Source: RMDB library OK2TST, as collected in RNAgym. This 177-nucleotide RNA was probed chemically with 2A3 and DMS.
[RMDB]
RNA sequence: GGGAACGACUCGAGUAGAGUCGAAAAAUGAUCAGCCUUCGAGCAAAUCGCAUGAUGAUCGUCGGACGUUUCGAGGGGGAUUGCACGCCCGAAGAGCUGCUCCGUCGCCUCCAGUCGGUGACGAACGUCAGCACUAUGUCUUCGGACAUAGUGCUGAAAAAGAAACAACAACAACAAC
Reactivity to 2A3 in 0.01 (KOAc 150mM, MgCl2 10mM, bicine 150mM(pH8.5), 24C), signal-to-noise 3, nucleotides 027 to 126: a000u150g000a030u030c000a000g050c010c000u010u010c000g030a020g000c030a040a060a190u200c080g010c060a020u070g030a030u060g050a090u070c040g170u010c030g080g090a100c150g110u060u240u180c000g040a020g000g020g030g000g000a010u020u030g000c050a010c050g010c000c000c010g010a020a000g020a030g000c010u010g000c010u000c000c000g000u000c000g000c000c000u040c030c020a100g160u170c030g000g010u010g010a010c000g020a100a020c050g070
Reactivity to DMS in 0.01 (KOAc 150mM, MgCl2 10mM, bicine 150mM(pH8.5), 24C), signal-to-noise 3, nucleotides 027 to 126: a150u010g040a030u000c000a050g000c040c010u000u000c010g000a020g010c030a150a060a090u000c160g000c040a080u000g010a260u000g000a060u000c020g000u000c040g010g020a140c260g000u000u000u000c040g000a090g000g010g010g010g000a120u000u000g010c030a090c170g010c030c010c010g010a030a030g000a100g030c010u020g000c090u000c020c010g000u000c020g000c000c000u000c090c140a120g010u010c220g010g020u010g000a020c000g020a040a090c190g010